This 207-nucleotide RNA was probed chemically with 2A3. 2A3 adducts were read by reverse transcription with SuperScript II with manganese. Conditions: 150 mM KOAc, 10 mM MgCl2 and 150 mM bicine (pH 8.5), 24 C. It was measured as part of the RMDB library M2RFPK. The 2A3 profile rests on 622 reads.

[RMDB]
RNA sequence: GGGAACGACUCGAGUAGAGUCGAAAAAUACAUCUCAGGAUGGCGCGUUGCAGUCCAACAAGAUCCAGGGACUGUACAGAAUUUUCCUAUACCUCGAGUCGGGUUUGGAAUCUAAGGUUGACUCGCUAAAACUUUACGUGGUUCGCCACGUAAAGAACGAUUGCUUGCAGUUCGCUGCAAGCAAUCGAAAAGAAACAACAACAACAAC
Reactivity to 2A3 in 0.01 (KOAc 150mM, MgCl2 10mM, bicine 150mM(pH8.5), 24C), signal-to-noise 1, nucleotides 027 to 156: a000u140a030c020a010u010c010u000c120a060g120g050a000u040g020g010c010g060c080g150u110u030g000c020a030g000u000c060c000a080a030c030a170a130g100a080u080c030c040a040g010g030g000a000c000u000g000u040a010c000a000g190a210a080u080u000u000u000c000c000u020a020u030a150c040c030u010c000g000a000g000u000c010g000g010g000u050u130u060g000g010a010a020u000c010u060a080a100g100g030u040u100g030a010c020u030c020g000c010u060a110a110a000a070c000u000u000u000a000c010g000u000g020g010u010u050c100g010c030c000a000c000g000u000a000a000a000g000a000a010